[RMDB]
RNA sequence: GGGAACGACUCGAGUAGAGUCGAAAAAAAAAGAUAUGGACCUAGAACUACUCCGACGUUAGCGACGAAGAACUCUCGGAAACGAGAGUUCAGAGCUAACCAAGGAGCUAGGUCCUAAGUCAAAAAAGUACUAAUAAUCGUUCGCGAUUAUUAGUACAAAAGAAACAACAACAACAAC
Reactivity to 2A3 in 0.01 (KOAc 150mM, MgCl2 10mM, bicine 150mM(pH8.5), 24C), signal-to-noise 1, nucleotides 027 to 126: a000a000a000a010a010g030a010u030a010u030g000g000a000c000c030u020a020g000a080a080c190u300a050c020u300c010c020g000a020c030g040u010u000a020g000c020g300a300c030g050a260a010g000a040a000c000u000c000u030c000g010g010a030a020a000c000g010a000g000a000g000u010u000c010a020g000a000g000c020u000a000a000c000c010a030a040g010g000a000g000c000u000a000g030g000u010c000c000u000a010a000g000u000c030a190a000a000a000a000a120
Reactivity to DMS in 0.01 (KOAc 150mM, MgCl2 10mM, bicine 150mM(pH8.5), 24C), signal-to-noise 3, nucleotides 027 to 126: a060a040a110a160a150g000a000u000a180u000g000g000a010c000c000u000a000g000a070a000c030u020a300c030u000c010c020g020a300c300g000u010u000a000g000c000g000a130c300g000a110a170g000a000a000c020u000c000u010c000g000g000a020a010a040c000g030a010g010a010g000u000u000c000a000g000a030g010c000u000a000a010c000c020a050a270g010g000a010g000c020u000a010g000g010u000c000c000u000a000a040g000u010c000a000a030a100a130a090a100